Structure probing data (2A3 and DMS) for a 177-nucleotide construct. For 2A3 the reverse transcriptase was SuperScript II with manganese.
[RMDB]
RNA sequence: GGGAACGACUCGAGUAGAGUCGAAAAUAAGGAGGGGUGAACCGGCCCAGGUCGGAAACGGAGCAGGUCAAAACUCCCGUGCUGAUCAGUAGUGGGAUCGCGCCUGUGAAUAGCCACUGCACUCCAGGUUGAGCAAUUGUUUCGACAAUUGCUCAACAAAAGAAACAACAACAACAAC
Reactivity to 2A3 in 0.01 (KOAc 150mM, MgCl2 10mM, bicine 150mM(pH8.5), 24C), signal-to-noise 4, nucleotides 027 to 126: u270a060a030g050g010a040g000g020g010g010u040g050a100a040c010c000g020g010c010c020c030a040g050g020u020c020g030g020a120a100a050c020g010g020a050g010c040a010g010g020u090c020a000a020a020a100c050u010c000c010c000g000u030g010c020u070g040a200u120c100a030g030u080a010g070u080g010g000g030a020u060c020g000c010g020c050c020u030g020u020g050a030a060u080a030g030c000c010a040c020u080g040c030a050c040u020c020c010a030g130
Reactivity to DMS in 0.01 (KOAc 150mM, MgCl2 10mM, bicine 150mM(pH8.5), 24C), signal-to-noise 4, nucleotides 027 to 126: u030a070a110g000g020a040g050g020g030g020u010g000a070a180c060c030g000g000c000c010c130a070g010g030u000c010g010g000a070a080a070c130g000g010a160g000c100a030g040g000u010c100a080a080a120a140c120u000c010c010c010g020u010g030c000u010g000a020u030c130a100g010u020a040g030u040g000g000g000a040u000c040g000c130g010c050c040u030g030u000g010a120a040u020a080g030c060c010a040c030u010g000c060a140c040u000c020c020a110g000